[RMDB]
RNA sequence: GGGAACGACUCGAGUAGAGUCGAAAAAGAAGUUGAUUGGCGGUGAUGUCACUCCAGUUGACCAAUACAUGUGUGGCGUUGAUGGAAAACCCAUUAGUGCCUACGCAUUUUUAAUGGCCAAGGAUGGGUCCAAAUGAAAGUUCGCUUUCAUUUGGACAAAAGAAACAACAACAACAAC
Reactivity to 2A3 in 0.01 (KOAc 150mM, MgCl2 10mM, bicine 150mM(pH8.5), 24C), signal-to-noise 2, nucleotides 027 to 126: a010g140a030a010g030u050u040g060a090u050u040g030g060c120g020g030u080g040a190u200g160u280c020a000c040u020c010c010a020g030u000u000g030a030c020c050a030a090u050a100c090a010u040g020u000g030u010g010g010c000g030u010u020g020a000u030g000g020a020a100a140a020c000c010c000a000u010u010a000g020u010g040c030c000u020a000c000g000c010a010u000u000u000u010u090a120a140u110g000g000c030c000a030a010g190g060a020u120g080g070
Reactivity to DMS in 0.01 (KOAc 150mM, MgCl2 10mM, bicine 150mM(pH8.5), 24C), signal-to-noise 3, nucleotides 027 to 126: a070g010a130a100g020u030u000g000a070u010u000g000g010c250g020g020u000g030a220u020g000u010c050a070c040u000c000c040a120g010u000u000g000a030c000c040a050a110u010a080c300a020u010g020u000g020u000g000g010c010g010u010u000g000a000u000g000g000a090a160a100a200c250c000c000a010u000u000a020g030u000g010c010c000u000a010c020g030c000a010u000u010u000u020u010a030a100u000g000g010c020c000a050a080g000g000a090u010g000g010